The data come from the RNA Mapping Database (RMDB), library OK2TST. Structure probing data (2A3 and DMS) for a 177-nucleotide construct. For DMS the reverse transcriptase was MarathonRT.
RNA sequence: GGGAACGACUCGAGUAGAGUCGAAAAGAUGCAGAGGCACGAGCGAAGAAACGCGAAGCUCUCAUUCACAGCGUUUCAGCGGAUCUCACAGCAGAGGUCAUUGAGCAUUUCACUGAAAAGAAACGUACCUACCAUCAUCAUUCGUGAUGAUGGUAGGAAAAGAAACAACAACAACAAC
Reactivity to 2A3 in 0.01 (KOAc 150mM, MgCl2 10mM, bicine 150mM(pH8.5), 24C), signal-to-noise 4, nucleotides 027 to 126: g060a020u060g020c050a020g020a040g100g040c060a040c160g010a020g020c030g030a120a030g040a120a180a030c010g010c020g040a050a010g020c010u000c010u000c030a060u100u090c090a050c040a090g020c020g010u000u040u040c020a010g000c000g050g000a030u020c000u010c020a050c060a040g070c040a020g040a030g040g030u050c040a110u060u140g060a040g030c010a040u060u080u070c080a100c060u070g050a010a030a040a050g070a050a060a010c040g060u110a040
Reactivity to DMS in 0.01 (KOAc 150mM, MgCl2 10mM, bicine 150mM(pH8.5), 24C), signal-to-noise 4, nucleotides 027 to 126: g000a060u000g020c100a080g010a060g020g020c030a050c070g010a270g020c040g010a140a120g000a060a050a080c040g020c030g000a120a150g020c060u000c020u010c050a070u000u000c080a090c200a130g010c060g010u010u000u010c020a120g020c050g000g010a120u000c020u010c020a130c120a120g010c140a080g010a080g000g000u000c030a160u000u010g020a080g000c050a050u010u000u010c040a060c070u010g020a030a030a030a060g010a020a050a040c090g030u050a120